RNA sequence: GGGAACGACUCGAGUAGAGUCGAAAAGAUAUGGAUAUAUCUAAUCAAGUCAUCGAUCUCGGAAACGAGGGAGACUGUUAGAGUAUAUCCUAAGUCAAAGCUGGACGCAGUUCGCUGCGUCCAGCAACUAUGAACAUAUGUUCGCAUAUGUUCAUAGAAAAGAAACAACAACAACAAC
Reactivity to DMS in 0.01 (KOAc 150mM, MgCl2 10mM, bicine 150mM(pH8.5), 24C), signal-to-noise 4, nucleotides 027 to 126: g000a050u010a300u010g000g010a020u000a000u000a010u000c010u000a000a010u010c070a100a030g020u000c020a250u000c180g010a060u010c000u010c000g000g000a120a080a160c010g010a010g010g010g000a030g020a010c000u000g000u000u000a010g010a040g030u000a010u000a010u000c000c000u010a050a120g010u000c020a080a100a110g020c000u000g000g000a020c010g010c000a020g000u000u000c240g010c000u000g010c000g010u000c010c000a010g000c010a010a020
Reactivity to 2A3 in 0.01 (KOAc 150mM, MgCl2 10mM, bicine 150mM(pH8.5), 24C), signal-to-noise 4, nucleotides 027 to 126: g030a020u080a050u150g000g000a000u000a000u010a010u000c010u020a010a050u240c240a180a030g020u000c020a160u300c120g070a080u020c010u000c010g040g040a100a080a090c010g010a010g000g030g000a040g000a000c000u010g010u010u010a020g020a020g270u030a010u000a000u020c000c000u010a100a020g040u030c060a150a060a050g000c000u000g040g000a000c000g000c020a020g020u060u150c180g060c150u000g020c030g000u000c020c000a010g000c010a000a000
Chemical mapping of a 177-nucleotide RNA with DMS and 2A3. Reactivities are rounded to 0.1 and cut off at 0 and 3. It was measured as part of the RMDB library TTRDEL. The RNA was probed in 150 mM KOAc, 10 mM MgCl2 and 150 mM bicine (pH 8.5) at 24 C. The 2A3 profile rests on 8,375 reads.